Chemical mapping of a 177-nucleotide RNA with DMS. It was measured as part of the RMDB library TTRDES.
[RMDB]
RNA sequence: GGGAACGACUCGAGUAGAGUCGAAAAAGAUAUGGAACAGCUAUGAAGUACUCGUACGCUCGAUAAGUGUGCUCGGAAACGAGCACACUUUUGACGAGUUGAAAGUAUGGAGCUGUUCCUAAGUCAAUCCAAGAAUUGAGUUCGCUCAAUUCUUGGAAAAAGAAACAACAACAACAAC
Reactivity to DMS in 0.01 (KOAc 150mM, MgCl2 10mM, bicine 150mM(pH8.5), 24C), signal-to-noise 3, nucleotides 027 to 126: a160g010a070u000a300u000g020g010a020a020c000a000g030c000u000a250u030g020a230a230g000u000a010c010u000c010g000u010a300c300g010c000u000c000g010a130u000a030a010g040u000g020u000g000c010u000c000g010g020a080a090a210c010g020a010g000c000a010c010a000c000u000u000u000u000g010a230c130g000a000g010u000u000g000a220a050a030g030u000a010u000g000g000a020g020c000u000g010u000u000c010c000u000a000a060g000u010c030a160a180

For DMS, 2,083 sequencing reads were counted. For DMS the reverse transcriptase was MarathonRT.